An RNA of 177 nucleotides, treated with DMS and 2A3 and read out base by base. For DMS the reverse transcriptase was MarathonRT. It was measured as part of the RMDB library OK2TST.
RNA sequence: GGGAACGACUCGAGUAGAGUCGAAAAUUGUCUAAUUUUGCGACAAAUUUCUAAGCCAUUAAUUGACGGCAACAUUAAAUCUAAUAUGAUUAAAUCAUAGUAAUGGCUAAGCGCUUUAUCUAAACCGCUUAACGCAUACAUUCGUGUAUGCGUUAAGAAAAGAAACAACAACAACAAC
Reactivity to DMS in 0.01 (KOAc 150mM, MgCl2 10mM, bicine 150mM(pH8.5), 24C), signal-to-noise 3, nucleotides 027 to 126: u000u010g000u000c020u030a090a140u010u000u020u000g030c140g010a020c030a000a060a140u000u000u000c020u010a110a120g020c000c000a010u010u000a040a140u020u000g020a040c150g010g010c140a050a050c050a050u000u010a040a090a100u000c070u010a100a180u010a030u010g010a040u020u000a190a090a180u000c000a020u010a140g000u000a010a010u000g010g020c000u000a060a070g000c110g020c150u000u010u000a060u010c110u010a040a060a130c110c130g020
Reactivity to 2A3 in 0.01 (KOAc 150mM, MgCl2 10mM, bicine 150mM(pH8.5), 24C), signal-to-noise 4, nucleotides 027 to 126: u030u010g010u000c010u010a060a130u100u200u230u280g070c010g010a000c020a020a050a020u060u090u000c050u100a100a010g000c010c000a020u050u030a060a070u030u080g040a010c030g080g030c020a040a020c020a040u150u150a100a150a110u040c050u130a100a140u140a280u220g010a010u050u090a070a080a040u030c000a020u040a050g050u040a040a010u010g000g000c020u010a110a050g040c040g020c080u110u070u070a060u070c070u110a050a080a060c020c010g030
Reactivities are given for positions 27 through 126.